[RMDB]
RNA sequence: GGGAACGACUCGAGUAGAGUCGAAAAAAGACGAGUGAUGAGCUUUGCGUGAAUCUUAAUUUACCCGCAAAUGUCCCAUACUCUCGUGUUAUUUCCAGGAUGGGCUUUAAACUCGAUGCAACAGUUCGAAGUCUUUAUUGUUCGCAAUAAAGACUUCAAAAGAAACAACAACAACAAC
Reactivity to DMS in 0.01 (KOAc 150mM, MgCl2 10mM, bicine 150mM(pH8.5), 24C), signal-to-noise 4, nucleotides 027 to 126: a040a030g000a010c010g010a020g010u000g010a040u000g000a030g000c010u000u000u000g010c000g010u000g020a120a080u010c300u010u010a090a100u010u010u000a150c100c120c030g000c020a010a010a040u000g010u000c000c010c000a010u000a100c020u000c010u000c010g020u000g010u000u000a090u000u000u000c010c030a120g000g020a130u000g010g000g020c040u000u000u010a060a080a120c050u000c030g010a050u000g000c090a060a060c090a110g010u000u000c110
Reactivity to 2A3 in 0.01 (KOAc 150mM, MgCl2 10mM, bicine 150mM(pH8.5), 24C), signal-to-noise 4, nucleotides 027 to 126: a000a000g060a000c010g010a000g010u010g000a000u000g000a000g020c000u020u020u010g000c010g010u060g020a050a030u040c080u120u140a150a130u200u100u110a130c030c000c010g000c010a020a030a020u050g090u160c030c000c020a000u060a170c020u010c000u000c010g000u010g040u080u030a060u020u030u010c010c010a010g100g040a090u100g030g000g020c010u010u070u150a050a040a020c020u020c070g020a030u090g010c060a080a060c010a100g030u110u110c050